Chemical mapping of a 177-nucleotide RNA with DMS and 2A3. It was measured as part of the RMDB libraries RFM100 and RFMREP. The RNA was probed in 150 mM KOAc, 10 mM MgCl2 and 150 mM bicine (pH 8.5) at 24 C. DMS adducts were read by reverse transcription with MarathonRT. The 2A3 profile rests on 1,999 reads.

[RMDB]
RNA sequence: GGGAACGACUCGAGUAGAGUCGAAAAGUCUGACCAGGCAGUGCCGCGAAGCUACCAUCUGCCGGAUUAUGGCUGAACGCCUCUAAGUCAGAAUCCGUACCGGAACGCGGCGAUGUUGCCCCGCACGUUAGCAUUGACCAUUCGUGGUCAAUGCUAAAAAAGAAACAACAACAACAAC
Reactivity to DMS in 0.01 (KOAc 150mM, MgCl2 10mM, bicine 150mM(pH8.5), 24C), signal-to-noise 3, nucleotides 027 to 126: g000u010c030u030g000a100c060c070a080g000g000c050a100g010u010g030c000c020g010c000g010a150a160g010c080u010a130c060c050a090u020c040u000g030c140c000g000g000a030u000u000a040u000g010g000c030u000g000a160a110c110g010c030c000u000c030u000a180a020g030u000c000a020g000a020a010u000c020c000g000u010a140c220c080g000g000a090a110c050g020c050g000g010c000g000a070u000g030u000u010g010c010c000c020c060g020c110a070c220g020
Reactivity to 2A3 in 0.01 (KOAc 150mM, MgCl2 10mM, bicine 150mM(pH8.5), 24C), signal-to-noise 3, nucleotides 027 to 126: g030u010c020u030g020a060c010c020a030g000g030c020a020g020u010g040c020c000g040c010g020a070a020g050c060u140a110c040c060a070u060c050u110g090c000c010g010g000a010u050u020a020u040g020g000c000u010g020a240a050c080g020c020c000u010c030u010a020a020g000u000c000a000g050a010a000u000c000c000g010u020a060c000c040g020g000a030a020c030g000c030g020g010c010g040a060u100g040u100u050g020c000c000c000c000g030c000a080c080g040